[RMDB]
RNA sequence: GGGAACGACUCGAGUAGAGUCGAAAAAGUGCCGACGAGGAGUCCGCAGGUGGGAGGAUCAGCCACCGGAGAGGGACGCGAUGGUAAGAGUGGAGGAAAGUUCGGAGGGAAAUCCCAAGAAGGUCAUGUACUGUAAAGUUCGCUUUACAGAAAAGAAACAACAACAACAAC
Reactivity to DMS in 0.01 (KOAc 150mM, MgCl2 10mM, bicine 150mM(pH8.5), 24C), signal-to-noise 9, nucleotides 027 to 129: a090g000u020g000c010c010g020a040c080g040a050g000g000a070g030u040c010c010g050c130a050g000g040u000g020g030g030a010g000g000a060u010c090a080g000c100c040a050c060c050g020g010a060g000a060g000g000g000a010c170g000c080g010a070u000g000g010u000a040a030g030a080g050u040g000g010a020g000g020a040a020a030g030u010u010c050g010g010a040g010g000g010a030a030a070u030c030c020c010a090a080g000a040a050g030g020u000c060a040u000g020u070a130
Reactivity to 2A3 in 0.01 (KOAc 150mM, MgCl2 10mM, bicine 150mM(pH8.5), 24C), signal-to-noise 9, nucleotides 027 to 129: a000g160u120g030c010c010g030a040c010g000a030g040g010a010g020u040c030c030g030c040a020g010g040u060g060g010g010a040g020g020a050u050c040a020g070c020c030a060c020c010g000g010a050g020a010g010g010g000a020c040g010c040g060a070u100g030g010u030a060a020g030a030g050u090g020g010a010g000g020a040a010a000g040u060u060c020g010g010a000g000g010g000a030a050a020u030c010c010c000a000a040g060a010a010g030g010u070c040a050u120g040u100a080
Structure probing data (DMS and 2A3) for a 170-nucleotide construct. DMS adducts were read by reverse transcription with MarathonRT. It was measured as part of the RMDB library 15KLIB. For 2A3, 39,570 sequencing reads were counted.